[RMDB]
RNA sequence: GGGAACGACUCGAGUAGAGUCGAAAAGUGGAUUUGUUCGCAAAUCCACAAAUCCCAACAAGCCUCGCUGGCAGCCUAACAACCGAGCUACGCGGCGUAGCAAAAGGUUACACUUCGGUGUAACCAAGGCUUUAUCUUACUUCGGUAAGAUAAAGCCAAAAGAAACAACAACAACAAC
Reactivity to DMS in 0.01 (KOAc 150mM, MgCl2 10mM, bicine 150mM(pH8.5), 24C), signal-to-noise 1, nucleotides 027 to 126: g000u010g010g000a010u000u000u000g010u000u020c210g000c000a020a000a000u000c000c000a020c000a020a080a300u000c000c000c000a040a250c170a070a130g000c030c040u000c060g000c040u000g000g000c040a030g000c000c030u000a040a130c200a120a060c210c080g000a110g020c000u000a030c090g000c090g020g010c040g080u000a030g000c000a050a130a130a080g000g020u000u020a000c000a000c010u010u000c160g020g000u000g030u000a030a040c000c010a050a010
Reactivity to 2A3 in 0.01 (KOAc 150mM, MgCl2 10mM, bicine 150mM(pH8.5), 24C), signal-to-noise 1, nucleotides 027 to 126: g000u000g000g010a010u010u010u000g030u040u020c070g000c080a000a000a000u000c000c010a000c010a000a000a000u000c010c000c000a000a020c030a000a020g010c010c000u030c010g010c010u010g040g000c000a010g000c010c020u100a170a130c080a060a030c110c060g050a060g010c000u030a030c160g040c000g120g000c030g000u020a000g000c010a000a050a040a110g010g000u010u000a000c010a000c000u040u080c180g090g000u000g000u000a000a000c000c000a000a010
This 177-nucleotide RNA was probed chemically with DMS and 2A3. The RNA was probed in 150 mM KOAc, 10 mM MgCl2 and 150 mM bicine (pH 8.5) at 24 C. As a SHAPE reagent, 2A3 marks flexible, mostly unpaired nucleotides at the ribose 2'-OH.